This 207-nucleotide RNA was probed chemically with 2A3 and DMS. The reactions ran in a buffer of 150 mM KOAc, 10 mM MgCl2 and 150 mM bicine (pH 8.5), at 24 C.

RNA sequence: GGGAACGACUCGAGUAGAGUCGAAAAGGGCAAUACCGGGCCCGAUACCGGAAUUAGUAGUUUUCUACGAGAGGCCCAAUCUGCGGCCGAAUGCAGUGUAGGUCGAAGCGAGGACCGAGACUCGAUAAUUACGUCGAUAGAUGGACGAUUGCAUCAAAAUACUAGUGCGAUUCGUCGCACUAGUAUUAAAAGAAACAACAACAACAAC
Reactivity to 2A3 in 0.01 (KOAc 150mM, MgCl2 10mM, bicine 150mM(pH8.5), 24C), signal-to-noise 3, nucleotides 027 to 156: g010g000g000c000a010a050u010a100c030c010g000g020g000c010c010c100g050a030u060a030c010c000g000g060a070a080u150u070a080g040u010a010g020u040u090u140u100c030u050a030c040g020a010g000a070g150g000c000c010c020a000a090u040c030u100g020c060g060g000c000c050g030a060a020u090g010c040a020g050u010g020u120a020g020g000u020c010g000a050a010g080c070g030a040g010g070a010c000c050g010a010g030a000c030u010c020g020a040u090a130a100u110u120a060c030g010u000c020g040a050u040a110g060a040u090g060g000a000c030g060a060u090u170g050c060a060u030c040a100a180
Reactivity to DMS in 0.01 (KOAc 150mM, MgCl2 10mM, bicine 150mM(pH8.5), 24C), signal-to-noise 2, nucleotides 027 to 156: g000g030g010c050a100a110u000a120c040c050g000g030g000c010c020c040g020a130u000a040c040c020g020g010a090a060u010u000a090g000u010a030g020u000u000u000u000c020u000a070c060g020a160g040a220g000g050c000c000c000a080a300u000c030u000g030c010g020g040c030c120g000a080a030u000g020c080a110g020u000g050u000a110g000g020u010c020g000a080a050g000c040g000a300g030g020a060c020c000g010a120g010a090c020u020c010g000a100u000a060a150u000u000a060c100g030u010c020g020a150u000a100g020a150u010g030g000a020c020g000a090u000u010g010c020a170u000c110a050a080
It was measured as part of the RMDB library OK3TST.